Conditions: 150 mM KOAc, 10 mM MgCl2 and 150 mM bicine (pH 8.5), 24 C.
Structure probing data (DMS and 2A3) for a 177-nucleotide construct.

[RMDB]
RNA sequence: GGGAACGACUCGAGUAGAGUCGAAAAACCUAUGGAUUCGUCCAUAGGUGCUGCCGCGCGGCCUUUGUCCUGUCGCGUGUGCGUGGUGGGCGAUAUACGCGCAAUAGUGACAAUUCGUUGUCACUAAGCCUUGAUCCUAUUUCGAUAGGAUCAAGGCAAAAGAAACAACAACAACAAC
Reactivity to DMS in 0.01 (KOAc 150mM, MgCl2 10mM, bicine 150mM(pH8.5), 24C), signal-to-noise 2, nucleotides 027 to 126: a020c000c000u000a000u000g000g000a030u000u000c160g010u000c000c000a010u000a010g000g000u000g010c070u010g010c030c020g000c010g040c010g010g010c030c100u000u000u000g000u000c070c100u010g040u000c010g030c000g000u000g020u000g010c010g020u010g000g010u000g000g000g010c020g000a120u020a160u010a080c020g020c050g020c090a140a180u000a000g000u000g000a010c010a010a040u000u020c200g020u000u000g010u000c000a000c000u000a000a110
Reactivity to 2A3 in 0.01 (KOAc 150mM, MgCl2 10mM, bicine 150mM(pH8.5), 24C), signal-to-noise 2, nucleotides 027 to 126: a010c000c000u000a000u010g000g000a010u020u130c200g030u030c060c000a000u000a010g020g010u010g020c040u070g000c000c030g000c000g000c000g020g030c010c030u080u070u170g080u160c000c010u030g020u070c020g010c010g030u100g090u110g060c030g000u020g040g030u100g050g010g000c030g000a020u030a000u010a180c010g050c000g000c000a050a120u080a050g010u000g000a000c000a020a000u030u070c200g070u040u010g000u000c000a000c000u010a060a020